[RMDB]
RNA sequence: GGGAACGACUCGAGUAGAGUCGAAAAACGCGGUACGCCGCGAAGGCGCGUCGCCCCCCUCAGUCCACCAGAGCCCGGAUACCUCAGAAAUUCGGAUUCUGGGUUCUGUGGGGAGCGAAAUGCAAAACUGUCACAUAGCGUUCGCGCUAUGUGACAGAAAAGAAACAACAACAACAAC
Reactivity to 2A3 in 0.01 (KOAc 150mM, MgCl2 10mM, bicine 150mM(pH8.5), 24C), signal-to-noise 2, nucleotides 027 to 126: a010c020g040c030g040g030u160a030c120g000c070c000g000c000g040a000a040g110g050c130g000c000g000u000c000g000c000c000c000c000c000c000u010c010a010g000u000c040c000a150c080c010a300g010a000g020c000c010c050g000g000a000u040a130c000c070u150c040a000g110a160a140a020u050u080c010g010g000a000u010u040c020u000g000g000g000u030u000c000u000g000u030g000g000g000g020a000g020c020g020a060a090a010u180g000c050a110a000a080a060
This 177-nucleotide RNA was probed chemically with 2A3. The 2A3 profile rests on 779 reads. The reactions ran in a buffer of 150 mM KOAc, 10 mM MgCl2 and 150 mM bicine (pH 8.5), at 24 C. Values cover nucleotides 27 to 126.